[RMDB]
RNA sequence: GGGAACGACUCGAGUAGAGUCGAAAAGUAAAGCAUUUUCAUGCACCAGGUGAUGGGCUGAAUACCUCACAUGGGUUUCCCUUCUCAACAACCCUACGAGGUUUACUGUUAUCAGCCUGGUUUCAAAGAAGGGGCAAUUGAAGCUUGGAGAACUCAAUAUACCUAGGGGAUUCGUCCCCUAGGUAUAAAAAGAAACAACAACAACAAC
Reactivity to DMS in 0.01 (KOAc 150mM, MgCl2 10mM, bicine 150mM(pH8.5), 24C), signal-to-noise 1, nucleotides 027 to 156: g050u000a060a080a150g040c010a050u020u000u000u000c080a080u020g000c110a130c020c010a000g010g020u000g000a110u000g000g010g080c040u010g010a110a090u000a050c020c010u000c020a050c070a030u000g040g040g010u010u000u000c060c110c060u020u000c110u000c080a090a120c060a020a110c010c010c030u010a110c110g010a050g030g020u000u000u000a100c070u010g010u010u000a100u000c020a130g010c010c020u010g000g020u000u000u000c000a050a100a060g020a080a070g010g020g030g030c030a040a120u000u010g010a050a150g010c050u000u040g020g010a170g030a050a250c030u000c010a020a230
Reactivity to 2A3 in 0.01 (KOAc 150mM, MgCl2 10mM, bicine 150mM(pH8.5), 24C), signal-to-noise 1, nucleotides 027 to 156: g070u100a030a020a020g050c000a010u000u080u240u250c100a050u080g000c020a000c020c000a020g060g000u040g000a240u000g010g030g010c050u020g010a060a020u060a080c020c000u040c000a040c000a140u090g000g020g000u020u040u010c020c020c000u210u000c060u070c060a050a100c000a040a000c000c000c000u010a030c050g000a000g000g050u070u000u020a060c000u000g000u030u060a040u190c040a000g000c000c000u000g030g000u020u000u060c070a070a080a000g040a030a050g060g040g040g000c010a020a000u050u050g040a090a010g000c030u050u080g010g020a050g090a010a040c050u070c150a240a000
An RNA of 207 nucleotides, treated with DMS and 2A3 and read out base by base. For 2A3, 422 sequencing reads were counted.